[RMDB]
RNA sequence: GGGAACGACUCGAGUAGAGUCGAAAAUGUGAUAUAUUCACAACUAGCAAAGGAAAGAAAGCAACCAAAGACGGGAGGCUGUGUGGAUUUGUGGAUGAGAGAGGAUUGUACAAAUCCUUGAAGGGGGGUUUACGCCCAGAUUCGUCUGGGCGUAAACAAAAGAAACAACAACAACAAC
Reactivity to DMS in 0.01 (KOAc 150mM, MgCl2 10mM, bicine 150mM(pH8.5), 24C), signal-to-noise 1, nucleotides 027 to 126: u010g030u000g000a090u020a110u010a200u020u000c030a020c040a090a130c100u000a100g030c060a070a050a070g010g000a040a050a110g030a100a070a090g000c070a080a100c020c060a080a070a050g010a030c130g030g030g000a080g000g000c070u000g000u000g020u010g000g000a060u000u010u000g000u020g010g000a060u000g000a080g000a290g020a000g000g020a000u000u000g000u000a120c130a030a000a010u000c010c010u000u000g010a120a060g000g000g000g000g020
Description
The record gives the reactivity of an RNA of 177 nucleotides to DMS. The RNA was probed in 150 mM KOAc, 10 mM MgCl2 and 150 mM bicine (pH 8.5) at 24 C. DMS (dimethyl sulfate) methylates the pairing face of unpaired adenines and cytosines.